[RMDB]
RNA sequence: GGGAACGACUCGAGUAGAGUCGAAAACUUACAAUCCGUCAGAGCCUGCGCCACUUUGGUGGGUGGGUGAUGGCGUGCCUUUUGAAGAAUGAGCCUGCGAGUUAGCGGCAUGUCGCGAGGUUAACCCCAACAGUGCCUAGUUCGCUAGGCACUGUUGAAAAGAAACAACAACAACAAC
Reactivity to DMS in 0.01 (KOAc 150mM, MgCl2 10mM, bicine 150mM(pH8.5), 24C), signal-to-noise 2, nucleotides 027 to 126: c040u000u010a100c130a060a060u010c110c010g000u000c010a010g010a300g000c000c000u000g010c010g030c000c010a000c000u010u000u020g040g020u010g010g040g000u010g010g020g010u010g020a200u010g010g000c000g020u020g030c150c050u010u010u000u010g010a110a060g020a090a110u010g000a150g000c000c080u000g050c030g020a140g000u000u000a130g000c070g000g040c030a030u000g040u000c040g000c050g010a040g010g020u000u010a110a150c010c000c010
Reactivity to 2A3 in 0.01 (KOAc 150mM, MgCl2 10mM, bicine 150mM(pH8.5), 24C), signal-to-noise 2, nucleotides 027 to 126: c000u050u120a130c020a040a040u040c020c000g000u000c000a000g000a010g010c010c020u050g030c090g300c010c010a020c030u180u190u300g190g000u030g000g010g020u000g000g000g030u060g010a020u010g010g000c010g010u020g000c000c050u150u140u040u110g060a050a060g060a060a050u060g000a020g040c020c040u010g010c050g030a080g060u120u120a050g050c040g050g000c040a020u110g040u040c010g000c040g020a000g000g000u000u130a090a080c030c000c000